The data come from the RNA Mapping Database (RMDB), library OK2TRN. Chemical mapping of a 177-nucleotide RNA with DMS and 2A3. For 2A3, 1,328 sequencing reads were counted. For 2A3 the reverse transcriptase was SuperScript II with manganese.
[RMDB]
RNA sequence: GGGAACGACUCGAGUAGAGUCGAAAACGCAGUGGCUUAUAUCCUCAAAAACAACGGUGGUCUGACAUAGAGAGGGCCACCUUCUCUUUCGGCUACGGGCUAAUGGUAACACCAUUACAGUUAGCGAUAGCUGACUGGAGUUCGCUCCAGUCAGCUAAAAAGAAACAACAACAACAAC
Reactivity to DMS in 0.01 (KOAc 150mM, MgCl2 10mM, bicine 150mM(pH8.5), 24C), signal-to-noise 3, nucleotides 027 to 126: c230g020c040a110g010u060g000g020c090u000u010a110u000a110u000c030c020u010c110a040a080a090a060a090c230a100a060c060g020g020u000g000g050u020c010u010g000a210c200a150u010a070g000a150g020a300g000g000g000c020c030a000c030c000u000u000c080u020c050u000u000u000c090g010g000c010u000a000c010g010g000g000c160u010a010a010u000g000g020u000a140a070c100a300c040c030a040u000u000a000c010a020g000u000u010a000g010c010g000a070
Reactivity to 2A3 in 0.01 (KOAc 150mM, MgCl2 10mM, bicine 150mM(pH8.5), 24C), signal-to-noise 1, nucleotides 027 to 126: c060g000c030a030g090u070g130g050c030u050u090a120u050a060u240c020c020u160c040a040a100a040a000a000c150a160a050c120g030g020u010g010g010u000c010u000g030a020c010a210u220a090g240a020g020a040g140g000g000c030c000a000c000c000u020u000c000u000c000u000u070u040c030g160g020c020u000a020c000g000g050g000c050u020a020a010u020g030g020u030a100a020c110a070c110c000a000u010u020a050c030a040g060u110u010a010g000c000g060a060